[RMDB]
RNA sequence: GGGAACGACUCGAGUAGAGUCGAAAAUGCAUGCCGAGUUGGUAACAGAACUCGUAAAUCCACUGUUGCAACUUUCUAUAGUUGCCAAUGACGAAACCUACGGGGAAUACGCUCUCGCUGCGUAAGCAGCCUUAGCCCUUCCCUCCUGGUACCUUCGCAUGAAGGAAAUGUUCGCAUUUCCUUCAUGAAAAGAAACAACAACAACAAC
Reactivity to DMS in 0.01 (KOAc 150mM, MgCl2 10mM, bicine 150mM(pH8.5), 24C), signal-to-noise 3, nucleotides 027 to 156: u020g020c050a060u010g040c100c050g010a130g010u010u010g000g020u000a060a120c040a120g000a060a060c040u010c030g020u010a030a130a100u000c060c040a070c020u000g000u010u020g030c010a030a020c030u000u000u020c130u010a100u010a050g020u000u000g010c000c020a030a070u000g010a150c050g010a090a090a140c040c020u000a070c070g010g040g000g010a040a050u000a100c090g000c000u000c020u000c030g000c000u000g010c000g000u000a130a200g040c000a010g020c000c010u000u000a010g000c000c040c140u010u000c000c000c000u000c030c030u000g000g000u000a070c080c010u000u000c040g000
Reactivity to 2A3 in 0.01 (KOAc 150mM, MgCl2 10mM, bicine 150mM(pH8.5), 24C), signal-to-noise 8, nucleotides 027 to 156: u150g010c050a020u110g050c030c000g010a010g010u020u010g020g030u020a040a020c010a030g020a030a000c010u010c040g110u130a010a020a030u030c050c040a060c050u030g020u040u030g000c000a010a010c020u080u210u180c120u270a120u130a160g010u000u010g000c020c020a140a220u170g030a020c040g060a100a060a040c010c010u040a060c090g020g000g010g020a000a010u070a050c050g010c010u000c000u010c020g000c010u010g000c010g030u090a070a080g000c000a000g000c000c000u020u030a000g000c010c010c000u010u000c000c000c000u040c010c030u030g000g030u060a100c000c020u010u040c040g000
An RNA of 207 nucleotides, treated with DMS and 2A3 and read out base by base. It was measured as part of the RMDB library RSTRND. The reactions ran in a buffer of 150 mM KOAc, 10 mM MgCl2 and 150 mM bicine (pH 8.5), at 24 C. For DMS the reverse transcriptase was MarathonRT.